[RMDB]
RNA sequence: GGGAACGACUCGAGUAGAGUCGAAAAAUCCUCAGGUUCAUAAGCGUGAUGAUUGGGUGUUCGUGCUCCAUGCAUGACAUGUGCCUCCUUUGAACCUUGUUACGACCUUGGCACAUUACCCAUCUGAAAAAGACGUUCGCGUUCGCGCGAACGUCAACAUGGGUUCUAACUUCGGUUAGAACCCAUGAAAAGAAACAACAACAACAAC
Reactivity to DMS in 0.01 (KOAc 150mM, MgCl2 10mM, bicine 150mM(pH8.5), 24C), signal-to-noise 2, nucleotides 027 to 156: a090u010c010c010u010c090a070g030g010u020u010c000a050u010a090a090g020c100g040u010g010a210u000g000a060u000u000g010g020g040u000g000u010u010c010g020u010g010c000u000c160c250a190u000g010c060a040u000g020a040c230a210u000g000u000g040c010c000u000c090c020u000u000u000g000a030a020c010c030u020u000g020u000u000a120c110g010a120c070c080u000u000g000g010c020a080c080a110u000u000a070c010c000c000a090u000c030u010g070a070a120a150a170a180g000a040c000g040u000u000c000g030c020g020u000u010c300g010c040g050c000g040a010a020c000g050u000c000a010a010
Reactivity to 2A3 in 0.01 (KOAc 150mM, MgCl2 10mM, bicine 150mM(pH8.5), 24C), signal-to-noise 2, nucleotides 027 to 156: a000u010c000c000u030c000a000g020g010u030u030c010a030u100a220a050g030c080g170u120g110a110u060g020a030u170u230g030g000g000u050g030u080u050c010g000u010g020c000u100c150c090a110u260g000c000a000u020g000a020c010a030u010g010u000g000c000c000u040c010c010u000u030u000g020a000a000c000c000u040u070g060u020u090a080c110g060a100c030c000u050u050g000g030c010a010c000a010u020u140a010c020c000c000a010u000c050u060g050a060a070a000a000a050g010a000c000g000u010u000c000g000c010g050u020u040c160g010c000g000c000g100a000a000c000g000u000c000a000a010